This 177-nucleotide RNA was probed chemically with 2A3 and DMS. It was measured as part of the RMDB library TTRDES. Values cover nucleotides 27 to 126. The reactions ran in a buffer of 150 mM KOAc, 10 mM MgCl2 and 150 mM bicine (pH 8.5), at 24 C.
RNA sequence: GGGAACGACUCGAGUAGAGUCGAAAAAGAUAUGGAGCAUUUGUCAGGAUAUGUAGUAGACGUUUGACGAUGCUCGGAAACGAGCAUCCGAGUCUAUGAAAUCCUUGGAUUUAAUGCUCCUAAGUCACUAAAUACAUUUGUUCGCAAAUGUAUUUAGAAAAGAAACAACAACAACAAC
Reactivity to 2A3 in 0.01 (KOAc 150mM, MgCl2 10mM, bicine 150mM(pH8.5), 24C), signal-to-noise 6, nucleotides 027 to 126: a020g060a030u120a060u170g010g010a000g000c010a000u000u020u030g030u020c010a000g020g000a020u020a030u230g010u020a020g000u000a000g010a010c060g060u130u250u300g030a040c010g010a000u000g000c000u000c000g000g000a050a050a000c000g000a000g000c000a000u000c000c000g020a010g010u000c010u010a020u020g010a020a010a010u000c000c000u030u120g100g000a020u240u300u240a010a010u000g000c000u010c000c000u000a010a000g000u000c000a000
Reactivity to DMS in 0.01 (KOAc 150mM, MgCl2 10mM, bicine 150mM(pH8.5), 24C), signal-to-noise 9, nucleotides 027 to 126: a090g000a040u000a300u010g000g000a020g020c000a010u000u000u000g010u000c010a030g000g000a020u000a040u010g010u000a190g000u000a000g010a020c010g010u010u010u010g020a190c300g000a010u000g010c000u000c000g010g000a080a110a170c010g020a010g010c000a010u000c000c010g000a090g010u000c000u000a000u000g000a110a070a030u000c000c000u000u010g030g010a030u000u010u000a010a010u000g000c000u000c000c000u010a020a090g010u000c040a260